[RMDB]
RNA sequence: GGGAACGACUCGAGUAGAGUCGAAAAUAUUGAUCAGCUUUCCGCCUUUCUUUGUAAAACGCGUCUUAUUCAAUACCAUCCGGAGGACUUUUUUCUCAUAUUUCUCCUCCAUGAUGAGAAAGAAGCCGAUCGUGACUACUUUCGAGUAGUCACGAUCAAAAGAAACAACAACAACAAC
Reactivity to 2A3 in 0.01 (KOAc 150mM, MgCl2 10mM, bicine 150mM(pH8.5), 24C), signal-to-noise 2, nucleotides 027 to 126: u130a030u020u140g000a000u060c020a000g060c090u050u130u010c040c030g000c020c020u000u070u030c080u040u180u190g070u230a000a000a000a120c060g060c020g070u040c020u030u090a090u100u000c000a040a010u020a010c000c050a020u040c020c030g050g090a130g110g020a240c050u030u000u000u000u030u020c080u010c060a070u110a150u080u130u010c080u010c020c010u060c030c000a040u170g020a010u020g000a050g030a010a000a000g020a010a010g000c000c000
Overview: This 177-nucleotide RNA was probed chemically with 2A3. The RNA was probed in 150 mM KOAc, 10 mM MgCl2 and 150 mM bicine (pH 8.5) at 24 C. It was measured as part of the RMDB library OK1LIB. The 2A3 profile rests on 740 reads.